[RMDB]
Structure probing data (2A3 and DMS) for a 207-nucleotide construct. The DMS profile rests on 2,331 reads. For 2A3, 1,094 sequencing reads were counted. 2A3 is a SHAPE reagent: it acylates the 2'-hydroxyl of flexible nucleotides of all four kinds. Conditions: 150 mM KOAc, 10 mM MgCl2 and 150 mM bicine (pH 8.5), 24 C.
RNA sequence: GGGAACGACUCGAGUAGAGUCGAAAACGGUACGUCGUGUGCAGUAGGUAUCCCAUGGUGCACAUGUGCCGUGGGUCGAAGAGGCUCAUGCCGGGGUUAGUUUCCAUAAUCGUCAGUACAUGCACAGUAGCUGACUCGGCGAUGGGAUACUCGAAGAAGCAGUUACUAGUUUCGACUAGUAACUGCUAAAAGAAACAACAACAACAAC
Reactivity to 2A3 in 0.01 (KOAc 150mM, MgCl2 10mM, bicine 150mM(pH8.5), 24C), signal-to-noise 2, nucleotides 027 to 156: c020g020g020u020a000c010g040u020c010g020u070g030u010g060c000a060g030u100a060g070g000u050a050u090c010c000c000a040u050g050g000u030g030c000a100c080a140u210g040u040g040c000c000g000u010g010g010g000u080c060g020a100a020g030a070g120g000c000u000c010a030u060g020c000c020g030g010g000g040u040u070a070g010u010u130u000c040c020a050u150a060a140u110c050g060u030c010a020g020u030a180c010a090u220g030c130a090c010a140g070u120a020g050c000u000g000a020c010u000c090g010g010c000g020a020u020g010g030g000a010u070a070c020u070c100g080a150a050g100a030
Reactivity to DMS in 0.01 (KOAc 150mM, MgCl2 10mM, bicine 150mM(pH8.5), 24C), signal-to-noise 1, nucleotides 027 to 156: c020g010g040u000a040c020g000u000c030g000u020g010u000g030c020a080g040u000a040g030g020u000a020u000c020c000c000a050u000g060g040u010g000c010a130c080a180u010g020u020g010c010c000g020u000g040g040g010u000c050g000a100a140g000a300g020g060c000u000c010a050u000g010c030c010g040g030g050g030u000u010a060g020u000u000u000c000c070a070u000a100a120u000c020g020u000c000a030g020u000a070c040a070u000g020c040a170c130a220g050u000a160g050c010u000g010a020c000u000c060g050g000c000g060a030u010g000g000g000a060u000a000c010u000c030g010a100a110g000a220